[RMDB]
RNA sequence: GGGAACGACUCGAGUAGAGUCGAAAAGAACGAGCGAAGAAGAUAGCUUCGUAGCACCUCUUCUGCUGUGAUGGCGAGAGAAGAGAAGCCAUCUACUGCCUCUUCUGUGCUAUGUGUUAUGCUCGGAGGGUAUACAUAUGUUCGCAUAUGUAUACCCAAAAGAAACAACAACAACAAC
Reactivity to 2A3 in 0.01 (KOAc 150mM, MgCl2 10mM, bicine 150mM(pH8.5), 24C), signal-to-noise 9, nucleotides 027 to 126: g100a060a020c050g000a010g020c040g030a060a050g050a060a030g070a210u130a040g070c020u120u130c030g020u010a000g020c010a020c010c030u070c060u190u070c080u140g010c010u030g040u090g090a080u120g040g010c050g020a060g010a010g040a210a040g050a010g020a090a010g020c010c010a030u030c060u100a080c030u040g030c020c020u070c020u160u050c080u090g020u020g010c010u020a040u050g070u000g020u070u050a080u170g020c020u010c020g020g010a070
Reactivity to DMS in 0.01 (KOAc 150mM, MgCl2 10mM, bicine 150mM(pH8.5), 24C), signal-to-noise 6, nucleotides 027 to 126: g020a080a060c060g000a020g000c030g010a080a050g000a110a070g020a080u010a070g000c020u000u010c040g000u020a040g010c070a050c070c140u000c020u000u020c040u030g020c020u000g010u000g010a100u070g000g010c020g000a060g000a050g000a080a050g000a060g000a150a080g000c050c080a090u030c120u010a110c080u010g010c040c020u000c010u000u010c020u010g010u010g000c030u000a030u010g010u010g000u000u010a050u010g000c040u000c000g000g000a290
Structure probing data (2A3 and DMS) for a 177-nucleotide construct. Source: RMDB library OK1LIB, as collected in RNAgym. Reactivities are rounded to 0.1 and cut off at 0 and 3. The RNA was probed in 150 mM KOAc, 10 mM MgCl2 and 150 mM bicine (pH 8.5) at 24 C. As a SHAPE reagent, 2A3 marks flexible, mostly unpaired nucleotides at the ribose 2'-OH. 2A3 adducts were read by reverse transcription with SuperScript II with manganese. The 2A3 profile rests on 14,326 reads. For DMS the reverse transcriptase was MarathonRT.